[RMDB]
RNA sequence: GGGAACGACUCGAGUAGAGUCGAAAAGGGGUCUUUGACGAUGAGCUCGUGAAGAGCAUCGAUCUGACUGAAGCCUCCACGGUCAGGGAGCUCCACGAGCGAGUCAAAGACGGAGGCACCCAAAACGCCUAAAGUGAGUUCGCUCACUUUAGGCGAACUAUUUGUGUUUCUUCGGAAACACAAAUAGAAAAGAAACAACAACAACAAC
Reactivity to 2A3 in 0.01 (KOAc 150mM, MgCl2 10mM, bicine 150mM(pH8.5), 24C), signal-to-noise 3, nucleotides 027 to 156: g010g010g060g020u020c020u000u000u000g030a050c060g200a280u170g040a000g010c010u000c010g010u020g100a280a220g000a030g030c030a040u300c010g010a010u000c000u000g000a000c000u010g020a100a020g000c010c000u000c000c000a000c000g000g000u010c000a000g000g000g010a000g000c000u000c010c000a010c010g000a010g010c000g000a000g000u000c000a000a000a010g000a000c000g000g000a000g000g000c010a030c010c000c000a050a100a010a010c020g000c000c000u010a000a000a000g000u010g010a010g010u080u160c240g080c140u000c000a000c000u010u000u000a000g000g000c000g000a010a000
Reactivity to DMS in 0.01 (KOAc 150mM, MgCl2 10mM, bicine 150mM(pH8.5), 24C), signal-to-noise 1, nucleotides 027 to 156: g030g020g110g000u000c010u000u000u000g000a030c020g040a140u000g010a300g020c020u000c020g100u000g000a090a180g000a080g010c030a110u000c110g000a120u000c000u000g020a040c000u000g020a010a170g040c000c000u030c010c020a300c050g010g000u010c000a020g020g000g010a210g010c010u000c000c020a110c060g000a050g000c020g020a020g000u000c020a010a040a070g000a020c000g000g020a080g150g070c000a170c010c020c030a080a090a190a210c020g000c050c050u000a020a000a000g030u000g000a030g020u000u010c300g050c010u020c000a000c020u000u000u000a000g000g020c010g020a020a070
Structure probing data (2A3 and DMS) for a 207-nucleotide construct. 2A3 adducts were read by reverse transcription with SuperScript II with manganese. For DMS, 1,731 sequencing reads were counted. The data come from the RNA Mapping Database (RMDB), library RNAMAK. The 2A3 profile rests on 5,568 reads. Conditions: 150 mM KOAc, 10 mM MgCl2 and 150 mM bicine (pH 8.5), 24 C.